[RMDB]
The record gives the reactivity of an RNA of 177 nucleotides to DMS.
The DMS profile rests on 969 reads.
For DMS the reverse transcriptase was MarathonRT.
It was measured as part of the RMDB library RFM100.
RNA sequence: GGGAACGACUCGAGUAGAGUCGAAAAAACCGCUGAAAGCAUCUAAGCGGGAAGCCUGUUCCAAGAUGAGGUUUCUCACCCCCUCGAGGGGGUAAGGCCCCCGGCAGACCACCGGGUUGAUAGGCCAUACGGCUCCUUUAUUCGUAAAGGAGCCGUAAAAAGAAACAACAACAACAAC
Reactivity to DMS in 0.01 (KOAc 150mM, MgCl2 10mM, bicine 150mM(pH8.5), 24C), signal-to-noise 1, nucleotides 027 to 126: a030a150c000c000g020c010u010g010a140a010a070g060c120a020u000c070u030a280a110g040c000g050g040g070a070a150g040c000c000u000g010u000u000c050c000a090a100g030a090u030g000a080g010g000u000u000u050c000u000c080a090c000c030c000c010c030u020c300g000a150g130g000g000g000g010u000a010a110g000g000c070c040c000c000c000g000g000c120a100g000a080c190c090a130c000c000g000g000g000u020u020g000a060u000a050g010g000c000c010a280
The RNA was probed in 150 mM KOAc, 10 mM MgCl2 and 150 mM bicine (pH 8.5) at 24 C.